[RMDB]
RNA sequence: GGGAACGACUCGAGUAGAGUCGAAAAGAGGCCGCUUGAGGGAUCCCCGGGGAAACGUCAAGCGAAUCUGGGAAGGGAGCGUACCUGGGUCGAUCGUGCGCGUUGGAGGAGACUCCUUCGUAGCUUCGCGCACCGCGUUAUUCGUAACGCGGUGCGCAAAAGAAACAACAACAACAAC
Reactivity to 2A3 in 0.01 (KOAc 150mM, MgCl2 10mM, bicine 150mM(pH8.5), 24C), signal-to-noise 1, nucleotides 027 to 126: g070a010g020g000c070c000g000c030u010u010g010a020g010g030g050a060u040c000c020c000c030g180g000g000g010a200a120a010c110g270u000c010a000a020g000c000g010a000a060u000c070u020g020g020g040a070a070g020g000g000a030g020c110g020u150a110c040c010u020g000g050g030u010c040g000a100u040c020g080u060g000c010g000c000g020u020u020g010g010a010g010g030a030g010a060c020u000c000c000u010u020c040g020u050a210g000c000u090u120c050